[RMDB]
RNA sequence: GGGAACGACUCGAGUAGAGUCGAAAAUGUCCGGAGGGAACCCCCAAGCUUUCAACAGAGGAAGAGAGCAAGAUAGAGGAGCCCCCGUGACGCUGGCAGCAUCGCGGACUGGGAGAAGAGAGGCGAAAACCAGGUCGCUUCGGCGACCUGAAAAGAAACAACAACAACAAC
Reactivity to DMS in 0.01 (KOAc 150mM, MgCl2 10mM, bicine 150mM(pH8.5), 24C), signal-to-noise 2, nucleotides 027 to 129: u040g040u040c000c090g060g000a100g010g020g030a120a120c170c030c040c000c000a130a150g020c100u050u010u000c090a110a150c110a120g050a000g040g020a050a030g030a010g090a100g030c060a000a000g030a100u040a040g030a040g030g010a120g040c000c000c000c000c000g060u020g070a090c100g070c100u030g000g040c150a090g010c060a120u000c090g060c120g000g000a000c140u030g060g030g020a140g000a000a000g020a130g000a040g010g000c130g070a000a000a000a000c070
Reactivity to 2A3 in 0.01 (KOAc 150mM, MgCl2 10mM, bicine 150mM(pH8.5), 24C), signal-to-noise 2, nucleotides 027 to 129: u130g020u010c000c000g000g010a060g010g010g020a040a070c000c000c000c000c000a010a130g070c060u020u170u220c010a070a030c000a060g050a040g000g030a070a000g060a000g000a000g020c000a050a010g070a050u300a040g040a040g010g040a000g000c000c000c000c000c000g060u040g020a040c050g070c020u000g050g000c010a000g000c000a030u030c050g000c000g140g020a030c100u210g000g010g000a030g000a020a000g040a000g040a020g000g020c000g010a010a080a000a010c000
Notes: Chemical mapping of a 170-nucleotide RNA with DMS and 2A3. High DMS reactivity at an A or C suggests that its Watson-Crick edge is free. For 2A3 the reverse transcriptase was SuperScript II with manganese. For 2A3, 2,057 sequencing reads were counted. The data come from the RNA Mapping Database (RMDB), library 15KLIB. Conditions: 150 mM KOAc, 10 mM MgCl2 and 150 mM bicine (pH 8.5), 24 C.